[RMDB]
RNA sequence: GGGAACGACUCGAGUAGAGUCGAAAAUCCCAUAGGUUGCCGAAUCCGAAAGGUGUGGAGGAACCGCUUUUUGGGGUUAAUCUGCAGUGAAGCUGCAGUAGGGAUACCUUCUGUCCCGCACCCGACAGCUAACUCCACAGGCAAUAAAGGAAGGAGAGCCAUAAUCAUACUUCGGUAUGAUUAUGGCAAAAGAAACAACAACAACAAC
Reactivity to 2A3 in 0.01 (KOAc 150mM, MgCl2 10mM, bicine 150mM(pH8.5), 24C), signal-to-noise 2, nucleotides 027 to 156: u010c000c010c000a040u090a020g110g000u000u010g020c050c000g110a140a170u130c040c000g060a080a040a060g010g010u010g000u000g020g020a000g020g050a020a050c080c010g000c010u150u240u070u130u140g030g010g000g020u010u020a000a030u050c000u000g010c020a020g010u120g200a150a020g060c000u000g020c000a000g000u020a000g000g000g010a020u080a130c000c000u000u000c000u030g020u000c030c010c010g000c000a030c020c000c000g030a100c080a050g000c000u010a040a020c000u000c000c010a000c000a000g000g000c000a000a010u030a040a050a040g060g000a020a020g040g010a100g030a000
Reactivity to DMS in 0.01 (KOAc 150mM, MgCl2 10mM, bicine 150mM(pH8.5), 24C), signal-to-noise 1, nucleotides 027 to 156: u000c010c000c010a090u010a100g050g010u000u000g060c000c020g030a190a300u030c010c040g020a240a130a200g020g040u000g110u020g000g000a190g040g000a090a160c150c070g020c080u000u000u000u040u000g080g010g040g010u000u000a110a160u000c000u020g050c010a030g020u000g000a160a270g020c000u010g000c000a030g030u000a040g030g000g000a030u000a030c040c200u000u000c120u040g000u000c110c010c000g010c040a120c010c000c000g010a020c090a080g000c000u000a080a230c010u000c010c030a000c040a130g010g050c000a050a110u000a080a150a050g020g000a050a000g050g030a260g000a260